[RMDB]
RNA sequence: GGGAACGACUCGAGUAGAGUCGAAAAUAAAAAACAUGAAUCUGAAUUAACUGAAUUAGAUCGAGCAAUUGGUGAUGGUGACCACGGGGUUAACAUGGUUCGUGGGUUUAGUAGUCUUAAAGACAAACAAUACUGACCCUUUCGAGGGUCAGUAUUGAAAAGAAACAACAACAACAAC
Reactivity to 2A3 in 0.01 (KOAc 150mM, MgCl2 10mM, bicine 150mM(pH8.5), 24C), signal-to-noise 4, nucleotides 027 to 126: u150a000a050a010a010a010a010c050a030u080g040a040a030u030c070u060g150a130a110u070u030a090a040c030u030g150a060a180u150u070a100g060a100u050c050g040a010g080c070a050a230u160u020g030g000u020g020a140u060g020g040u060g080a030c000c030a010c080g080g000g000g010u040u010a020a010c020a040u130g040g020u020u020c010g040u010g020g090g050u020u000u040a080g000u010a000g010u000c000u010u250a170a130a020g020a010c020a000a030a000
Reactivity to DMS in 0.01 (KOAc 150mM, MgCl2 10mM, bicine 150mM(pH8.5), 24C), signal-to-noise 4, nucleotides 027 to 126: u040a020a030a120a050a090a040c060a010u010g010a040a020u000c020u000g000a130a210u010u010a060a050c070u020g000a100a090u020u020a070g010a080u010c060g000a130g020c090a060a070u010u000g010g010u010g000a070u010g020g020u010g000a090c090c060a050c090g000g030g000g010u000u000a020a040c100a070u000g000g020u010u010c010g000u010g000g000g000u010u010u020a080g000u020a070g010u000c010u000u020a050a080a100g020a020c050a080a060a170